RNA sequence: GGGAACGACUCGAGUAGAGUCGAAAAUACGCGAGGUUCGCCUCGCGUAAAACAGGAGCGUAAACGUGAGCGUACGUAGUGCUGUACAUCGUUCCUACACGAAUGCACAUGGUUUCGACCAUGUGAACUCUCAUUAGUUGUUCGCAACUAAUGAGAGAAAAGAAACAACAACAACAAC
Reactivity to 2A3 in 0.01 (KOAc 150mM, MgCl2 10mM, bicine 150mM(pH8.5), 24C), signal-to-noise 9, nucleotides 027 to 126: u060a000c000g000c000g010a000g010g020u050u090c170g090c050c000u000c000g000c000g000u000a000a000a000a010c070a010g030g030a030g030c020g030u110a070a060a110c070g040u080g110a040g070c050g050u080a030c060g060u090a050g100u080g140c030u050g040u060a010c010a060u050c020g000u010u000c000c000u030a020c070a000c040g190a150a060u240g010c010a000c000a000u000g010g030u040u090u130c220g090a020c000c000a000u000g000u010g000a010a000
Reactivity to DMS in 0.01 (KOAc 150mM, MgCl2 10mM, bicine 150mM(pH8.5), 24C), signal-to-noise 9, nucleotides 027 to 126: u000a000c010g010c000g000a010g000g010u000u010c230g020c020c000u000c000g010c000g010u000a000a020a090a070c090a040g000g010a140g000c010g010u000a020a080a080c070g010u000g020a130g030c300g020u000a030c030g020u010a080g020u000g010c010u000g010u000a140c160a120u000c030g010u000u000c010c000u000a100c170a080c130g000a080a090u010g000c010a010c000a010u000g000g000u000u000u020c200g010a030c000c000a010u000g010u000g000a040a090